An RNA of 207 nucleotides, treated with 2A3 and read out base by base. Reactivities are given for positions 27 through 156. For 2A3, 827 sequencing reads were counted.

RNA sequence: GGGAACGACUCGAGUAGAGUCGAAAAGUCCACGUUCGCGUGGACAAAAAACCGUAGGUUGACUAUUGGAGGCGCAAAUUAGACACUUCGAAAGAGGUGCUAACUCGUACGCCUCAGGGUCAACCUAAACGGAAAAAAGGUUAUUUCGAUAACCUAACCCGUUGAAAGUUUUCGAACUUUCAACGGGAAAAGAAACAACAACAACAAC
Reactivity to 2A3 in 0.01 (KOAc 150mM, MgCl2 10mM, bicine 150mM(pH8.5), 24C), signal-to-noise 1, nucleotides 027 to 156: g000u000c000c020a020c020g030u050u020c200g000c010g120u010g000g000a010c000a000a050a000a050a000a030c000c000g000u000a010g000g020u010u010g000a000c000u040a130u300u220g300g010a010g010g040c000g000c010a030a070a000u020u010a030g140a100c010a010c010u000u020c000g060a080a110a050g000a010g000g010u010g000c020u010a010a010c000u050c090g020u110a000c060g000c050c000u020c000a000g000g000g000u010c000a000a000c000c000u010a000a020a000c000g020g000a000a000a000a040a110a140g020g010u040u040a050u040u180u140c150g060a010u030a010a000c000c000u030a040a070